Structure probing data (DMS and 2A3) for a 177-nucleotide construct. It was measured as part of the RMDB library OK2TRN. The RNA was probed in 150 mM KOAc, 10 mM MgCl2 and 150 mM bicine (pH 8.5) at 24 C. For 2A3, 903 sequencing reads were counted. For DMS the reverse transcriptase was MarathonRT.
RNA sequence: GGGAACGACUCGAGUAGAGUCGAAAAUAGUGAGGCCUGACUCAUUGACCCUCAUAGACUAGUCACAUGAGCUGGUAUAAGCUAUGGCCUUUUGCUGCAGUGGUAGGUGUAUGUGACAACUCUCACACUGGUACACAGUCUUCGGACUGUGUACCAGAAAAGAAACAACAACAACAAC
Reactivity to DMS in 0.01 (KOAc 150mM, MgCl2 10mM, bicine 150mM(pH8.5), 24C), signal-to-noise 2, nucleotides 027 to 126: u000a010g020u000g010a190g000g010c020c010u010g000a070c000u010c020a000u000u000g000a060c000c060c090u010c140a070u000a060g010a060c080u020a120g020u000c050a000c240a040u000g010a040g000c020u000g000g020u010a040u000a040a300g060c020u030a030u000g000g000c060c060u000u000u020u000g000c060u000g010c030a070g020u000g000g000u000a060g000g000u000g010u000a020u000g000u020g000a040c100a010a110c250u000c070u020c060a110c150a150
Reactivity to 2A3 in 0.01 (KOAc 150mM, MgCl2 10mM, bicine 150mM(pH8.5), 24C), signal-to-noise 1, nucleotides 027 to 126: u080a000g040u030g020a020g000g040c020c160u070g090a200c020u010c000a060u040u040g030a060c020c040c000u030c010a120u100a090g030a020c040u020a010g000u010c030a030c020a070u010g040a010g040c010u030g050g000u060a100u010a170a010g000c000u000a050u060g100g000c010c000u080u090u040u180g030c050u020g070c020a030g020u030g030g080u070a080g030g150u110g010u060a070u180g080u050g000a010c000a050a050c030u020c020u030c010a000c000a040